[RMDB]
Chemical mapping of a 207-nucleotide RNA with DMS and 2A3. It was measured as part of the RMDB library OK3TST. Reactivities are rounded to 0.1 and cut off at 0 and 3.
RNA sequence: GGGAACGACUCGAGUAGAGUCGAAAAUCAAGAGAGAGAAUUUUGAGGUUAUCGCUCCAGAUGUGAACAAAUCAGAGUUAUCUUUUGUUGCCUCUCAGGGCAAAAUCAUUUUCCCUCUUGGGAUGAUCAAUGGUGUUGGGGAGACAGCUGUAGUCGAGAUCUUUUCUAAUUUCGAUUAGAAAAGAUCAAAAGAAACAACAACAACAAC
Reactivity to DMS in 0.01 (KOAc 150mM, MgCl2 10mM, bicine 150mM(pH8.5), 24C), signal-to-noise 1, nucleotides 027 to 156: u000c010a060a150g010a060g000a060g000a080g010a070a050u000u000u000u000g030a090g030g020u000u000a060u000c100g010c000u010c040c070a120g000a040u020g020u000g000a020a070c040a020a050a040u010c050a110g000a180g010u000u010a080u000c030u010u000u000u020g010u000u000g010c020c040u000c020u010c080a060g000g020g030c050a020a050a060a080u010c030a060u000u000u000u000c010c000c010u010c060u000u010g000g010g020a050u010g000a050u000c050a080a090u010g000g000u010g020u000u000g030g000g010g030a090g010a080c050a040g020c050u010g030u010a100g020u010c050g030a300
Reactivity to 2A3 in 0.01 (KOAc 150mM, MgCl2 10mM, bicine 150mM(pH8.5), 24C), signal-to-noise 2, nucleotides 027 to 156: u060c000a050a000g030a000g010a000g020a000g040a080a020u080u100u080u160g030a090g080g000u090u090a090u230c060g020c010u010c010c020a020g030a080u040g050u080g110a050a040c040a040a060a050u220c080a030g020a040g090u170u120a190u140c050u050u100u060u050g040u020u050g030c010c000u040c020u020c090a090g000g000g000c000a010a010a020a040u030c020a010u050u040u050u000c000c010c000u030c040u050u090g040g010g020a060u080g020a020u090c090a080a080u090g050g000u050g030u090u080g030g020g020g000a040g020a020c030a020g060c090u090g040u180a010g020u040c000g020a010